The record gives the reactivity of an RNA of 207 nucleotides to 2A3 and DMS. The DMS profile rests on 3,330 reads. 2A3 adducts were read by reverse transcription with SuperScript II with manganese. It was measured as part of the RMDB library RNAMAK. DMS (dimethyl sulfate) methylates the pairing face of unpaired adenines and cytosines. The RNA was probed in 150 mM KOAc, 10 mM MgCl2 and 150 mM bicine (pH 8.5) at 24 C.
[RMDB]
RNA sequence: GGGAACGACUCGAGUAGAGUCGAAAACUGCUUGAUUCGUCAAGCAGAAAAAAGCGUACUACGACAUGAAGUAAUGCUCCCCACCCUAGUCCCAAAUAGGACUAGGAGGCAUGCUUCAACAGCGUAUCGCAAAAAGGUGCACGUUCGCGUGCACCAAACUGUGGUAGGUAUUCGUACCUACCACAGUAAAAGAAACAACAACAACAAC
Reactivity to 2A3 in 0.01 (KOAc 150mM, MgCl2 10mM, bicine 150mM(pH8.5), 24C), signal-to-noise 5, nucleotides 027 to 156: c010u010g000c000u000u010g000a030u060u060c190g050u020c170a000a000g000c000a000g050a040a030a000a010a000a000g030c030g010u070a070c040u020a010c050g140a080c050a140u070g010a000a000g020u300a300a050u010g010c010u200c070c010c000c000a030c000c010c000u000a000g010u020c040c030c010a160a300a100u290a120g000g010a000c000u000a010g000g000a000g000g000c000a000u000g010c000u000u010c010a060a060c030a090g040c000g000u020a020u250c020g030c070a010a060a040a020a100g000g000u000g000c000a010c000g010u040u090c230g020c010g080u000g000c000a000c000c000a000a000
Reactivity to DMS in 0.01 (KOAc 150mM, MgCl2 10mM, bicine 150mM(pH8.5), 24C), signal-to-noise 2, nucleotides 027 to 156: c020u010g010c000u000u040g020a040u000u000c300g040u000c010a010a060g000c020a040g000a000a050a090a120a090a080g020c040g070u010a070c060u000a050c030g000a060c030a300u010g000a070a030g000u000a060a040u000g000c020u000c070c040c030c090a300c210c010c000u020a020g000u000c000c000c020a090a170a210u000a070g000g020a020c000u000a010g000g000a050g010g010c010a010u000g000c010u020u000c020a040a090c110a120g000c020g010u010a060u000c060g030c000a060a070a040a130a050g010g030u010g010c000a000c010g040u000u010c290g000c010g010u010g000c000a030c000c000a010a010